This 207-nucleotide RNA was probed chemically with 2A3 and DMS.
The reactions ran in a buffer of 150 mM KOAc, 10 mM MgCl2 and 150 mM bicine (pH 8.5), at 24 C.
For DMS, 4,213 sequencing reads were counted.
2A3 is a SHAPE reagent: it acylates the 2'-hydroxyl of flexible nucleotides of all four kinds.
RNA sequence: GGGAACGACUCGAGUAGAGUCGAAAACUUGCCAAUAUGGUGAAUCACCAUCUCUACUAAAUAUACACAAAUUAGCUGGGCAUGGUGGUGCGCGCCUACUCCCAGCUAUCGGGAGGCUGAGGCGGGAGAAUCACUCGAAUCAGGGAGGUGGAGGUUACGGUAAUUUAUGGUUCGCCAUAAAUUACCGAAAAGAAACAACAACAACAAC
Reactivity to 2A3 in 0.01 (KOAc 150mM, MgCl2 10mM, bicine 150mM(pH8.5), 24C), signal-to-noise 5, nucleotides 027 to 156: c040u070u130g030c020c020a080a080u130a110u220g020g010u070g060a070a070u090c010a030c030c010a050u020c030u010c010u060a100c030u060a090a060a090u210a070u080a080c090a020c040a070a070a190u100u020a020g000c020u020g000g000g010c060a030u040g000g000u010g000g020u070g010c130g000c000g000c020c000u020a050c020u030c010c000c000a010g010c050u040a060u130c030g010g000g020a030g040g000c090u080g050a020g010g010c000g000g030g000a060g010a030a040u110c040a040c070u070c030g040a040a050u100c030a030g030g000g000a050g010g010u030g020g040a030g010g000u060u060a030
Reactivity to DMS in 0.01 (KOAc 150mM, MgCl2 10mM, bicine 150mM(pH8.5), 24C), signal-to-noise 2, nucleotides 027 to 156: c050u010u000g030c020c050a150a200u020a050u000g000g030u020g020a090a050u000c020a070c020c020a040u000c040u010c050u000a120c020u000a040a060a050u040a160u010a090c120a150c090a150a050a120u000u000a010g000c000u000g010g010g030c180a020u010g030g010u010g010g010u010g030c060g000c030g020c010c010u000a110c070u000c010c010c020a110g020c040u000a040u000c060g010g000g020a060g000g000c100u000g010a070g000g010c020g010g000g000a070g000a160a100u000c060a040c020u010c050g010a100a090u010c050a110g000g010g010a090g010g020u000g000g010a100g010g000u000u000a090